Notes
The record gives the reactivity of an RNA of 177 nucleotides to DMS. The reactions ran in a buffer of 150 mM KOAc, 10 mM MgCl2 and 150 mM bicine (pH 8.5), at 24 C. For DMS the reverse transcriptase was MarathonRT. It was measured as part of the RMDB library OK2TRN.

RNA sequence: GGGAACGACUCGAGUAGAGUCGAAAAAGCAGUUUGACUCGUUUGGUAAGCGGUGGGAAGCAAUAUUGCUCCAAGUAUUAGAGGGUAUAAAACCCAAUGAGAGCCAGGUUGGAUUACCUUAUUUAUCUGAUCUUCUCCUGUUCGCAGGAGAAGAUCAAAAAGAAACAACAACAACAAC
Reactivity to DMS in 0.01 (KOAc 150mM, MgCl2 10mM, bicine 150mM(pH8.5), 24C), signal-to-noise 1, nucleotides 027 to 126: a070g000c040a000g010u020u000u000g000a120c100u000c070g020u000u000u000g010g000u000a130a070g030c050g000g010u000g010g010g000a130a120g010c030a090a100u010a150u000u000g030c010u010c090c010a040a070g010u000a060u000u000a120g020a170g000g060g000u000a100u000a030a090a150a170c010c030c000a040a060u000g000a040g000a040g030c030c130a040g000g010u000u000g000g010a040u000u000a090c050c070u000u000a060u010u000u000a070u020c120